[RMDB]
RNA sequence: GGGAACGACUCGAGUAGAGUCGAAAAUGGGUGAUCCGCAGCCAAAUCCUAAGGACAUUUUAUUGUCUAUGGAUGCAGUUCACAGGCCAGAUGGCAAUGGGUAUCCUAGUGGGAUAUAUAUAUAUGGCAGGAAAUUCGUAUUCGUACGAAUUUCCUGAAAAGAAACAACAACAACAAC
Reactivity to DMS in 0.01 (KOAc 150mM, MgCl2 10mM, bicine 150mM(pH8.5), 24C), signal-to-noise 3, nucleotides 027 to 126: u020g040g020g010u020g000a030u000c000c040g020c080a150g000c030c030a080a130a070u010c010c020u010a100a140g000g000a020c010a020u000u050u010u010a060u060u000g020u000c000u010a300u010g000g010a020u000g010c060a050g000u000u030c050a070c080a110g010g010c000c010a100g000a080u020g010g010c030a070a040u000g010g000g040u010a030u000c030c020u010a060g020u020g000g010g020a010u000a030u000a090u040a050u050a130u030a090u000g000g010
Reactivity to 2A3 in 0.01 (KOAc 150mM, MgCl2 10mM, bicine 150mM(pH8.5), 24C), signal-to-noise 4, nucleotides 027 to 126: u080g050g000g020u080g010a050u020c020c020g000c030a020g050c010c000a040a070a030u050c000c010u030a050a130g040g000a010c010a030u130u180u140u250a200u290u060g010u010c010u020a040u050g000g000a000u030g000c030a000g050u080u130c050a050c010a080g100g050c030c010a110g040a190u150g050g000c020a050a040u010g040g010g010u040a040u030c010c010u030a040g080u120g040g020g020a010u020a000u020a000u000a020u000a010u010a080u180g090g010
Record summary:
The record gives the reactivity of an RNA of 177 nucleotides to DMS and 2A3. For DMS the reverse transcriptase was MarathonRT. The reactions ran in a buffer of 150 mM KOAc, 10 mM MgCl2 and 150 mM bicine (pH 8.5), at 24 C. The data come from the RNA Mapping Database (RMDB), libraries RFM100 and RFMREP. 2A3 is a SHAPE reagent: it acylates the 2'-hydroxyl of flexible nucleotides of all four kinds. For 2A3 the reverse transcriptase was SuperScript II with manganese.